An RNA of 177 nucleotides, treated with 2A3 and read out base by base. It was measured as part of the RMDB library OK1LIB. As a SHAPE reagent, 2A3 marks flexible, mostly unpaired nucleotides at the ribose 2'-OH. The 2A3 profile rests on 569 reads. Values cover nucleotides 27 to 126. The reactions ran in a buffer of 150 mM KOAc, 10 mM MgCl2 and 150 mM bicine (pH 8.5), at 24 C.
RNA sequence: GGGAACGACUCGAGUAGAGUCGAAAAGGAGAUCGAAGACGACUUCACCGACGUCAGCACGGUCAGGAUGUAGGUCCGCAUGCAUCCAAGUUGACGAAACGAUUUCCAAAGCGGACAAGAAGUCAAAGGGAAGCAUCUAGUUCGCUAGAUGCUUCCCAAAAGAAACAACAACAACAAC
Reactivity to 2A3 in 0.01 (KOAc 150mM, MgCl2 10mM, bicine 150mM(pH8.5), 24C), signal-to-noise 1, nucleotides 027 to 126: g030g000a000g000a050u150c000g070a090a070g260a220c070g070a000c000u140u020c020a010c010c000g070a110c000g000u030c020a000g010c030a090c040g060g040u070c060a010g050g000a000u000g010u000a000g060g000u000c000c000g000c000a000u000g000c000a000u020c000c000a000a100g020u030u030g000a020c020g020a000a000a130c060g000a010u020u020u010c050c000a080a100a040g000c000g000g000a000c050a020a020g170a060a010g100u100c020a030a020a020